[RMDB]
RNA sequence: GGGAACGACUCGAGUAGAGUCGAAAAGAUAUGGACCAUGCUAGAAUCGAGUAGCGAUGAAGGUUAUAGCCUCGGAAACGAGGCUAUAACUGGAGCUAUAACGAUUCUUGGACCAUGGUCCUAAGUCCCUGUUCUAUAGGUUCGCCUAUAGAACAGGAAAAGAAACAACAACAACAAC
Reactivity to DMS in 0.01 (KOAc 150mM, MgCl2 10mM, bicine 150mM(pH8.5), 24C), signal-to-noise 4, nucleotides 027 to 126: g020a100u000a280u000g000g020a000c000c000a010u000g000c030u010a010g000a020a010u000c010g040a300g010u000a000g020c000g000a120u030g020a240a220g000g000u000u000a010u000a000g010c000c000u000c010g000g000a110a100a180c010g020a020g010g000c000u000a000u000a000a000c000u000g000g000a030g040c000u000a010u000a090a130c040g020a010u000u000c000u010u010g030g010a120c300c010a010u000g000g010u000c010c000u000a010a150g000u010c040
Reactivity to 2A3 in 0.01 (KOAc 150mM, MgCl2 10mM, bicine 150mM(pH8.5), 24C), signal-to-noise 2, nucleotides 027 to 126: g070a060u130a080u260g000g000a010c000c000a000u010g040c010u040a020g000a010a010u000c010g010a020g070u020a000g000c040g300a300u030g020a010a000g020g030u000u000a000u000a000g000c010c000u000c000g030g060a100a070a040c010g000a000g040g020c000u000a000u010a010a000c000u000g000g000a000g000c000u020a000u060a210a120c000g000a000u010u010c020u010u080g040g050a030c100c040a000u010g010g000u000c000c000u000a080a020g040u020c000